[RMDB]
RNA sequence: GGGAACGACUCGAGUAGAGUCGAAAACUGCUUUAUUCUUGAGCUGUUCACCCUCCAUGAAGCUCUCAAGUCCUGCAUCCUGAGGAUCCAGAUGGAUGACAAGGACACAGGACUGCCAUUGAGAAAUGAAGAUGAACUGUGUCACAGAUGCAGUGGACCUAUACGAUAUCUUCGGAUAUCGUAUAGGAAAAGAAACAACAACAACAAC
Reactivity to 2A3 in 0.01 (KOAc 150mM, MgCl2 10mM, bicine 150mM(pH8.5), 24C), signal-to-noise 7, nucleotides 027 to 156: c020u030g040c010u060u090u110a090u130u070c020u040u070g020a010g010c010u010g020u040u030c080a240c090c030c000u000c020c000a030u050g080a120a030g010c030u000c010u020c100a090a010g000u000c000c000u010g000c000a040u020c000c010u050g040a140g110g030a040u020c040c000a100g070a300u260g110g000a010u000g020a040c030a020a030g010g000a000c010a000c010a010g000g000a010c010u020g040c040c020a040u050u090g020a010g030a020a100a030u140g030a070a040g050a090u120g030a040a030c000u010g010u020g060u060c010a100c040a240g020a010u030g000c000a010g010u050g030g040a010
Reactivity to DMS in 0.01 (KOAc 150mM, MgCl2 10mM, bicine 150mM(pH8.5), 24C), signal-to-noise 3, nucleotides 027 to 156: c020u000g000c020u000u010u000a060u020u010c030u010u010g020a300g020c000u000g000u020u000c040a040c000c030c010u000c010c040a070u000g000a060a120g050c070u000c020u000c070a080a090g000u010c010c010u000g010c010a080u000c020c010u010g000a300g030g010a140u010c020c000a190g020a170u000g050g020a010u000g010a150c060a140a080g030g010a020c020a030c030a000g000g000a050c020u010g020c130c020a070u000u010g000a140g010a060a110a070u010g010a110a060g030a120u000g010a040a060c010u000g010u000g000u000c010a110c140a090g000a060u000g000c020a050g020u010g000g000a170